[RMDB]
RNA sequence: GGGAACGACUCGAGUAGAGUCGAAAAGGGUGAGACCUAGGAACCGUAGGGGUAUUCUCAAAGGAAGCUUUUGCAGUGACGCCCAUGUAAGUGGGGUAUAACAACAGAACUCGUAUGAGUAGCCUAAUAAAUCGGACCUUCUUCGGAAGGUCCGAAACUAAUAGUCUUUCUUCGGAAAGACUAUUAGAAAAGAAACAACAACAACAAC
Reactivity to 2A3 in 0.01 (KOAc 150mM, MgCl2 10mM, bicine 150mM(pH8.5), 24C), signal-to-noise 2, nucleotides 027 to 156: g060g000g040u060g050a100g040a030c000c020u040a060g050g040a060a070c030c000g010u050a060g030g040g020g000u040a090u110u090c050u050c040a050a060a020g070g000a060a040g010c030u020u050u090u090g010c030a030g020u010g060a020c040g040c000c010c010a030u060g090u140a110a080g010u030g020g000g000g040u070a070u060a110a020c060a000a030c010a020g040a040a050c020u030c080g020u150a130u170g020a020g020u030a020g070c000c030u060a110a120u090a140a150a030u040c000g000g000a000c000c000u010u000c020u020u030c110g080g010a000a000g000g000u000c010c000g000a000a000a000
Reactivity to DMS in 0.01 (KOAc 150mM, MgCl2 10mM, bicine 150mM(pH8.5), 24C), signal-to-noise 2, nucleotides 027 to 156: g030g000g010u000g000a080g010a100c040c010u020a090g020g000a050a060c040c040g000u000a100g000g000g020g030u020a070u000u010c030u000c050a060a130a160g010g010a060a060g010c050u000u000u000u000g020c010a070g060u000g000a090c060g060c000c030c000a060u010g030u010a050a140g040u000g030g020g020g010u000a030u000a070a070c050a090a090c040a040g000a040a020c030u000c020g020u000a140u010g000a060g010u000a070g010c050c000u000a020a070u000a060a090a190u000c000g000g000a040c000c000u000u010c010u000u000c300g040g000a000a020g040g020u000c010c000g000a000a000a070

Notes
Chemical mapping of a 207-nucleotide RNA with 2A3 and DMS. Conditions: 150 mM KOAc, 10 mM MgCl2 and 150 mM bicine (pH 8.5), 24 C. For DMS, 2,761 sequencing reads were counted. Reactivities are given for positions 27 through 156.